[RMDB]
The record gives the reactivity of an RNA of 177 nucleotides to DMS and 2A3. 2A3 adducts were read by reverse transcription with SuperScript II with manganese. DMS (dimethyl sulfate) methylates the pairing face of unpaired adenines and cytosines.

RNA sequence: GGGAACGACUCGAGUAGAGUCGAAAACACAGGCGACUUAAACGGAGAGCGGUUACACGCGAGGAAGAUGAAAUUAUUACAUCAGUAGACUCGAGAUUACUACAACUUGCGUUGCUAUCUCAAAUAACCCUUAAGAAACCUUCGGGUUUCUUAAGGGAAAAGAAACAACAACAACAAC
Reactivity to DMS in 0.01 (KOAc 150mM, MgCl2 10mM, bicine 150mM(pH8.5), 24C), signal-to-noise 1, nucleotides 027 to 126: c080a100c130a180g020g020c030g030a140c040u000u000a090a060a200c060g010g010a030g000a090g020c060g000g030u000u000a100c250a060c020g010c000g000a010g000g000a100a090g000a040u000g000a060a040a090u030u000a080u000u000a210c010a000u000c000a100g000u000a010g000a160c070u000c050g010a020g030a040u030u000a180c000u000a000c060a150a030c030u010u000g010c020g000u000u000g030c030u000a120u000c000u000c050a120a050a110u010a080a090
Reactivity to 2A3 in 0.01 (KOAc 150mM, MgCl2 10mM, bicine 150mM(pH8.5), 24C), signal-to-noise 1, nucleotides 027 to 126: c090a000c000a010g170g000c020g040a040c020u060u150a060a090a010c040g080g000a010g000a010g050c130g030g050u010u090a060c020a010c080g030c000g030a010g000g000a070a140g020a060u030g060a000a110a100u300u300a060u100u200a110c020a020u000c010a000g030u040a000g030a030c030u010c110g050a110g030a100u110u150a000c010u000a010c010a090a020c020u010u030g030c010g090u020u000g000c030u040a060u040c000u020c000a000a000a100u080a080a100
Source information: The 2A3 profile rests on 810 reads.